Source information: An RNA of 207 nucleotides, treated with DMS and 2A3 and read out base by base. DMS adducts were read by reverse transcription with MarathonRT. The DMS profile rests on 19,495 reads. 2A3 is a SHAPE reagent: it acylates the 2'-hydroxyl of flexible nucleotides of all four kinds.

RNA sequence: GGGAACGACUCGAGUAGAGUCGAAAAGACGAGUACAUAUCAGCGUAACUGCCCAAUCGGUACUCCUCGUAGAGCGUACGCGCGCCGAUACCUGCAUGUAAGAUCAGAGCGGACUUGAUCUCGUCGUACACUCGGCAGGAUGCCUUCUCCGUGACGAGAUAGUACUUAUCUUCGGAUAAGUACUAUCAAAAGAAACAACAACAACAAC
Reactivity to DMS in 0.01 (KOAc 150mM, MgCl2 10mM, bicine 150mM(pH8.5), 24C), signal-to-noise 5, nucleotides 027 to 156: g010a080c060g020a090g020u000a070c040a120u000a090u000c050a060g030c030g040u010a070a150c150u010g030c010c000c040a130a130u010c060g010g020u000a030c060u000c010c030u000c070g020u000a080g010a010g020c000g020u000a020c050g030c080g020c060g020c030c020g020a190u000a050c070c040u000g010c080a130u010g030u000a090a070g010a100u000c020a060g000a160g000c050g020g000a100c100u000u010g010a080u000c000u000c000g010u000c010g010u000a060c030a040c040u000c010g020g040c040a080g000g000a110u010g000c030c030u000u010c020u000c020c060g000u010g010a130c080g010a250
Reactivity to 2A3 in 0.01 (KOAc 150mM, MgCl2 10mM, bicine 150mM(pH8.5), 24C), signal-to-noise 9, nucleotides 027 to 156: g050a020c040g010a020g050u130a050c080a080u190a100u180c080a060g060c020g040u040a060a090c040u100g020c010c010c000a030a070u110c050g000g010u030a040c110u010c010c000u040c060g060u100a040g010a010g020c010g000u020a010c030g040c010g000c020g020c060c040g040a060u130a170c010c020u040g020c040a070u120g080u220a120a080g020a120u120c040a020g020a020g080c040g020g020a070c050u090u140g050a060u050c020u020c040g100u030c010g000u020a010c030a010c020u010c000g050g000c030a010g000g020a020u040g000c010c000u080u080c050u040c030c040g100u080g070a050c060g010a030